[RMDB]
RNA sequence: GGGAACGACUCGAGUAGAGUCGAAAAGAUAUGGACAUAGGGAGGAUAACAUGCGUUUGACGGUGGGCCAGUCGGAAACGACUGGCCCACCCGAGCAUGGAAAUCCAUCGAUCUAUGUCCUAAGUCACAUGAAAGAGUAGUUCGCUACUCUUUCAUGAAAAGAAACAACAACAACAAC
Reactivity to DMS in 0.01 (KOAc 150mM, MgCl2 10mM, bicine 150mM(pH8.5), 24C), signal-to-noise 1, nucleotides 027 to 126: g000a040u000a300u000g040g000a050c000a010u010a040g030g020g000a030g000g050a030u010a010a300c010a020u000g000c000g020u000u010u020g020a110c300g070g010u000g110g000g100c000c000a120g000u060c050g110g040a080a080a200c030g060a070c010u000g060g010c000c000c000a000c000c000c000g000a040g000c000a000u020g000g000a060a040a050u000c020c020a300u000c210g010a030u010c030u000a000u000g010u000c000c000u000a000a070g010u010c040a260